[RMDB]
RNA sequence: GGGAACGACUCGAGUAGAGUCGAAAAUCGUGAGAUGUGGUGCCUCACGCGCUCGAGGCGUCCGUGGUCAGAGAGACCACUGACGCAAAAACUCGAGCGCAAAUAAAGGGCAUUACAUGAAGAAUAAACGUACGUCAUACUUCGGUAUGACGUACGUAAAAGAAACAACAACAACAAC
Reactivity to DMS in 0.01 (KOAc 150mM, MgCl2 10mM, bicine 150mM(pH8.5), 24C), signal-to-noise 2, nucleotides 027 to 126: u030c080g000u010g010a300g000a030u000g000u010g000g000u010g000c000c000u020c090a170c200g000c010g100c000u000c000g010a000g000g000c010g000u000c050c090g000u000g000g000u010c000a110g000a230g000a300g000a040c000c000a000c010u010g000a000c000g080c020a070a050a080a130a270c000u000c000g000a000g000c000g000c000a000a010a090u010a020a020a210g000g000g010c010a000u000u000a000c010a030u000g000a170a110g000a050a080u020a040a070
Reactivity to 2A3 in 0.01 (KOAc 150mM, MgCl2 10mM, bicine 150mM(pH8.5), 24C), signal-to-noise 1, nucleotides 027 to 126: u130c060g040u080g090a160g020a080u000g000u010g000g000u010g000c000c010u070c020a110c130g000c010g000c000u000c000g000a020g000g000c010g000u000c000c000g000u000g000g000u000c030a040g080a010g040a020g000a300c000c000a000c000u000g000a000c000g000c000a040a030a040a040a040c000u000c000g000a000g000c020g000c000a010a000a010u120a020a090a000g050g000g000c000a000u000u000a000c000a000u010g040a060a090g070a030a020u200a150a140
An RNA of 177 nucleotides, treated with DMS and 2A3 and read out base by base. As a SHAPE reagent, 2A3 marks flexible, mostly unpaired nucleotides at the ribose 2'-OH. It was measured as part of the RMDB library OK1LIB. Values are in units of 0.01, from 0 to 300, in steps of 10. Conditions: 150 mM KOAc, 10 mM MgCl2 and 150 mM bicine (pH 8.5), 24 C.